An RNA of 177 nucleotides, treated with DMS and 2A3 and read out base by base. The RNA was probed in 150 mM KOAc, 10 mM MgCl2 and 150 mM bicine (pH 8.5) at 24 C. The 2A3 profile rests on 14,989 reads. For DMS, 10,406 sequencing reads were counted. It was measured as part of the RMDB library M2PK90.
[RMDB]
RNA sequence: GGGAACGACUCGAGUAGAGUCGAAAAAGAACUAGCGAUUGUAAAAGGCUGUUUGCGCUAAGAUAUGGAAUUAGCGCAAAUAGGUCCCAAUUCCUUGAUAACAUUUCGGACAACCGCGCUAAAACAAGCGUAAAUAAUAAUUCGUUAUUAUUUACGCAAAAGAAACAACAACAACAAC
Reactivity to DMS in 0.01 (KOAc 150mM, MgCl2 10mM, bicine 150mM(pH8.5), 24C), signal-to-noise 8, nucleotides 027 to 126: a050g000a120a100c130u000a080g020c020g010a070u000u000g010u010a060a090a130a100g000g010c020u010g010u000u000u000g000c000g010c000u000a010a010g010a140u010a200u010g020g010a120a130u000u000a000g000c000g010c000a000a010a020u000a020g010g010u000c010c020c030a050a100u010u000c020c020u010u010g020a060u010a080a110c120a300u000u000u000c070g010g000a060c070a040a040c030c030g010c010g010c130u000a030a060a070a090c200a060a090
Reactivity to 2A3 in 0.01 (KOAc 150mM, MgCl2 10mM, bicine 150mM(pH8.5), 24C), signal-to-noise 8, nucleotides 027 to 126: a010g050a050a020c030u030a020g020c000g040a040u030u120g050u110a080a080a070a060g020g000c010u000g010u010u000u000g000c010g010c000u010a020a000g040a140u180a160u300g110g040a050a140u020u000a000g000c000g000c000a000a000a000u000a000g000g020u060c010c000c000a010a050u060u030c010c000u040u080g030a030u050a130a090c070a180u070u140u150c040g010g000a010c010a040a020c040c020g030c010g010c090u090a070a080a020a040c060a130a010